[RMDB]
RNA sequence: GGGAACGACUCGAGUAGAGUCGAAAAACCUACCAUUCGUGGUAGGUGUAGAUCCUAAGUCAGCGACGAAUUUGUCAGCUGAAUAUCGGAAACGAUAUUACCAGCUUGGAUUUAACUAUCGCUGAUAUGGAACGUUAUGAAAGAUUCGUCUUUCAAAAAUCUAAGAACUCUUCGGAGUUCUUAGAUUAAAAGAAACAACAACAACAAC
Reactivity to 2A3 in 0.01 (KOAc 150mM, MgCl2 10mM, bicine 150mM(pH8.5), 24C), signal-to-noise 3, nucleotides 027 to 156: a000c020c000u020a010c000c000a030u060u060c230g090u070g010g000u010a000g020g000u010g000u010a070g030a060u010c010c000u040a150a030g030u000c000a000g010c000g000a010c040g060a250a280u030u030u050g080u060c030a000g000c000u000g000a010a000u000a000u000c000g000g010a050a080a070c030g000a000u000a000u020u070a130c110c000a010g010c030u080u170g130g010a050u090u070u150a030a030c040u030a020u040c010g010c000u000g000a010u030a070u090g030g000a070a070c070g050u120u170a110u230g010a000a010a040g000a010u040u160c190g060u000c070u010u000u030c040a100a060a010
Reactivity to DMS in 0.01 (KOAc 150mM, MgCl2 10mM, bicine 150mM(pH8.5), 24C), signal-to-noise 3, nucleotides 027 to 156: a050c030c010u000a000c000c010a090u000u010c270g040u000g020g020u000a010g000g010u000g000u000a060g020a170u010c000c000u000a060a280g030u000c000a010g010c000g010a020c070g020a040a090u000u010u000g030u000c040a050g000c000u010g010a040a010u000a000u000c000g030g010a260a220a280c000g010a020u000a010u000u000a070c190c000a010g000c010u010u010g020g020a070u010u010u000a060a080c100u000a040u000c000g000c000u010g010a000u000a300u010g020g000a050a150c060g010u000u000a060u000g010a050a040a090g010a160u000u010c260g010u000c020u000u000u000c030a010a090a130